An RNA of 207 nucleotides, treated with 2A3 and DMS and read out base by base. The reactions ran in a buffer of 150 mM KOAc, 10 mM MgCl2 and 150 mM bicine (pH 8.5), at 24 C. For DMS the reverse transcriptase was MarathonRT. The 2A3 profile rests on 5,255 reads. High 2A3 reactivity points to a flexible backbone, as in loops and unpaired stretches.
[RMDB]
RNA sequence: GGGAACGACUCGAGUAGAGUCGAAAAGGGGUCCUCCGCGUAGGGAACAUAUACGCAUGAGCUGAAGCCUCCACGGCUCAUGUCGUAUCACCCCCUCCCCAAUCCCUGAUCGGAGGACGGAGGCACCCAAACCAAGUAAGCUUCGGCUUACUUGGAAGUUAAUGUCUAUGUUCGCAUAGACAUUAACAAAAGAAACAACAACAACAAC
Reactivity to 2A3 in 0.01 (KOAc 150mM, MgCl2 10mM, bicine 150mM(pH8.5), 24C), signal-to-noise 4, nucleotides 027 to 156: g060g010g030g000u010c010c000u000c000c020g060c100g120u240a010g020g010g030a090a060c120a170u300a040u020a100c000g000c000a000u000g000a000g000c020u030g010a080a000g000c000c000u010c000c000a030c010g000g000c010u000c010a000u000g030u060c030g000u020a020u090c040a300c010c040c010c020c030u090c000c000c010c000a000a070u020c000c000c000u010g020a040u110c020g000g000a000g000g000a000c000g010g000a000g000g000c000a020c000c010c000a030a020a010c010c000a000a000g000u000a000a000g010c000u000u120c200g040g000c000u020u000a010c000u000u000g000g000a000a000
Reactivity to DMS in 0.01 (KOAc 150mM, MgCl2 10mM, bicine 150mM(pH8.5), 24C), signal-to-noise 3, nucleotides 027 to 156: g030g030g020g020u010c010c010u000c010c010g020c130g000u000a040g010g010g010a040a090c170a130u000a130u000a000c000g030c000a030u000g010a030g010c000u010g000a060a160g000c030c000u020c010c040a300c040g010g000c000u000c010a020u000g000u000c030g040u000a040u010c070a230c040c020c040c040c060u010c060c000c020c020a100a180u000c000c000c010u000g010a100u010c010g010g000a030g000g020a020c010g020g010a040g020g040c020a060c000c020c010a060a140a300c020c000a030a000g000u000a020a000g020c000u000u010c300g030g000c010u000u000a000c000u000u000g010g000a010a060